[RMDB]
RNA sequence: GGGAACGACUCGAGUAGAGUCGAAAAUGGUCUUUUUACAGUUCCUACUUAUCCGGUUUUAACGCUGUUUUAUUGGCGCAAAGGUUUACGGAUAAACAACUAAUAAUUAAACCUUUUGUGUGCGAAAAUUGGACGUUUAGGUUCGCCUAAACGUCAACUCAAAGUAAAGUUUCGACUUUACUUUGAGAAAAGAAACAACAACAACAAC
Reactivity to 2A3 in 0.01 (KOAc 150mM, MgCl2 10mM, bicine 150mM(pH8.5), 24C), signal-to-noise 6, nucleotides 027 to 156: u110g040g040u140c090u050u170u070u060u130a080c080a060g020u030u030c010c000u010a050c040u050u020a010u010c010c010g000g040u010u020u010u060a070a020c040g010c030u030g170u150u140u090u170a130u130u260g040g000c010g000c030a030a010a010g000g000u000u000u000a000c000g000g010a000u040a040a070a020c030a030a010c060u180a060a140u110a170a020u210u100a040a000a000c000c000u020u070u080u140g080u010g030u030g060c080g080a070a050a080a150u120u130g130g010a000c000g000u010u000u000a000g010g020u030u060c170g050c030c010u010a020a000a000c000g000u000c000a000a000
Reactivity to DMS in 0.01 (KOAc 150mM, MgCl2 10mM, bicine 150mM(pH8.5), 24C), signal-to-noise 2, nucleotides 027 to 156: u000g030g000u000c020u000u000u000u000u000a100c120a140g010u000u000c010c030u020a090c120u010u000a020u000c020c010g010g020u000u000u000u010a260a070c020g000c010u010g000u010u010u000u010a150u050u000g010g040c010g000c000a040a030a040g040g000u000u000u000a130c000g000g010a020u010a020a050a160c030a030a120c100u010a150a120u000a070a150u010u000a010a030a010c000c010u000u000u020u010g010u000g020u000g020c010g000a080a060a100a190u000u020g000g020a030c000g030u000u000u000a000g000g020u000u010c300g030c010c000u000a000a010a010c000g010u000c000a010a060
Chemical mapping of a 207-nucleotide RNA with 2A3 and DMS.
The data come from the RNA Mapping Database (RMDB), library M2RFPK.
For DMS the reverse transcriptase was MarathonRT.
2A3 adducts were read by reverse transcription with SuperScript II with manganese.
The reactions ran in a buffer of 150 mM KOAc, 10 mM MgCl2 and 150 mM bicine (pH 8.5), at 24 C.